Source information: The record gives the reactivity of an RNA of 177 nucleotides to DMS and 2A3. 2A3 adducts were read by reverse transcription with SuperScript II with manganese. Conditions: 150 mM KOAc, 10 mM MgCl2 and 150 mM bicine (pH 8.5), 24 C. In probing experiments dimethyl sulfate is read out at A N1 and C N3, which are open when not base-paired.

RNA sequence: GGGAACGACUCGAGUAGAGUCGAAAAUGCGGCCAAUUGCUGACAGAAAAGCUACCUUAGGGAUAACAGAGUCGUCACCCGCAAGAGCACAUAUCGACCGGGUGGCUUGCUACCUCGAUGUCGGUUCUGACAGACCGUAUUUCGAUACGGUCUGUCAAAAAGAAACAACAACAACAAC
Reactivity to DMS in 0.01 (KOAc 150mM, MgCl2 10mM, bicine 150mM(pH8.5), 24C), signal-to-noise 3, nucleotides 027 to 126: u040g000c060g000g020c040c090a070a130u030u010g000c060u020g030a090c060a050g000a110a040a050a090g010c040u000a020c020c000u000u020a070g010g000g050a070u020a100a060c220a160g020a030g000u000c050g010u000c100a070c010c010c010g050c220a100a100g010a060g010c100a070c090a030u040a080u000c060g000a200c220c060g000g020g070u000g000g030c040u010u010g000c000u000a040c130c000u030c030g000a100u030g020u000c010g000g000u000u040c030
Reactivity to 2A3 in 0.01 (KOAc 150mM, MgCl2 10mM, bicine 150mM(pH8.5), 24C), signal-to-noise 5, nucleotides 027 to 126: u110g000c000g010g030c050c050a060a100u160u120g010c020u010g050a070c010a040g090a020a140a000a000g010c020u050a060c030c000u050u130a060g000g030g050a020u030a160a030c050a110g040a040g080u050c020g010u010c080a300c050c020c020g020c030a080a050g020a020g070c040a040c030a220u140a050u090c020g000a010c000c010g000g000g000u000g000g000c000u010u060g000c000u010a030c000c000u010c030g010a020u140g010u020c010g010g020u030u020c050